[RMDB]
RNA sequence: GGGAACGACUCGAGUAGAGUCGAAAAAGCCAUUACGAUGGCAACCGCCACUCUGCGUGUUCACGGCGGACCUUGAUUUAAUAUCCAUACAAUUAAGGCACGCGGUGAAUGCCAAGAGAGGGGUCAAAAGUAUAGCCAUCUUCGGAUGGCUAUACUUAAAAGAAACAACAACAACAAC
Reactivity to DMS in 0.01 (KOAc 150mM, MgCl2 10mM, bicine 150mM(pH8.5), 24C), signal-to-noise 3, nucleotides 027 to 126: a040g000c020c000a000u000u030a080c280g040a010u000g010g010c000a070a120c010c010g000c000c010a050c000u000c000u000g000c300g030u010g020u000u000c000a000c000g000g000c010g040g010a060c010c010u020u000g030a000u000u000u000a090a060u000a080u110c190c200a050u010a150c300a020a000u000u000a000a000g000g000c300a010c000g020c000g010g080u000g000a010a010u010g000c040c040a300a050g020a000g000a080g010g000g000g020u010c130a090a080
Reactivity to 2A3 in 0.01 (KOAc 150mM, MgCl2 10mM, bicine 150mM(pH8.5), 24C), signal-to-noise 5, nucleotides 027 to 126: a000g030c020c000a010u050u070a140c300g100a040u010g000g000c020a030a000c000c000g110c020c000a060c000u000c000u020g060c080g050u020g010u000u000c000a000c020g250g000c000g020g010a050c000c000u000u000g000a000u000u020u040a300a090u040a070u080c050c010a030u030a070c030a020a000u000u010a000a000g010g000c030a020c070g000c020g010g000u000g000a010a000u010g020c010c010a090a010g050a000g030a020g060g020g000g030u080c030a160a060